Structure probing data (2A3 and DMS) for a 177-nucleotide construct.
For DMS, 2,778 sequencing reads were counted.
Reactivities are given for positions 27 through 126.
The reactions ran in a buffer of 150 mM KOAc, 10 mM MgCl2 and 150 mM bicine (pH 8.5), at 24 C.
As a SHAPE reagent, 2A3 marks flexible, mostly unpaired nucleotides at the ribose 2'-OH.
RNA sequence: GGGAACGACUCGAGUAGAGUCGAAAAGUGGUGUUUUAAACACAGGAAUGGUCUAAUAUCAGCUCCUUUGACCUUAGUGCUGCAGGAUUGCAGGGGGCUCAGCAAGUCAAAGAUCAUGUUAGUUACCCGCUUUAUGCUAUUUCGAUAGCAUAAAGCGAAAAGAAACAACAACAACAAC
Reactivity to 2A3 in 0.01 (KOAc 150mM, MgCl2 10mM, bicine 150mM(pH8.5), 24C), signal-to-noise 2, nucleotides 027 to 126: g150u130g120g010u030g000u020u060u090u240a170a210a020c020a020c020a020g110g110a160a100u100g010g030u020c020u080a050a090u080a100u180c100a030g020c040u090c010c000u020u040u060g030a020c010c000u020u050a140g020u140g140c040u050g010c020a010g050g300a300u230u170g000c000a000g000g000g030g010g000c000u000c000a020g000c060a110a080g030u100c060a090a030a080g000a030u030c000a000u030g050u030u010a020g000u010u030a090c020c020
Reactivity to DMS in 0.01 (KOAc 150mM, MgCl2 10mM, bicine 150mM(pH8.5), 24C), signal-to-noise 3, nucleotides 027 to 126: g040u010g010g020u000g000u000u000u000u000a090a080a070c000a020c010a060g000g000a180a060u000g000g010u010c020u000a070a060u000a080u000c130a100g010c090u000c060c010u000u000u010g010a040c020c080u020u000a070g020u010g010c010u000g000c110a040g000g000a130u010u010g010c060a060g000g010g000g010g000c020u000c080a040g000c090a080a070g010u000c060a080a050a030g000a020u000c070a050u000g010u000u000a060g000u000u000a090c030c030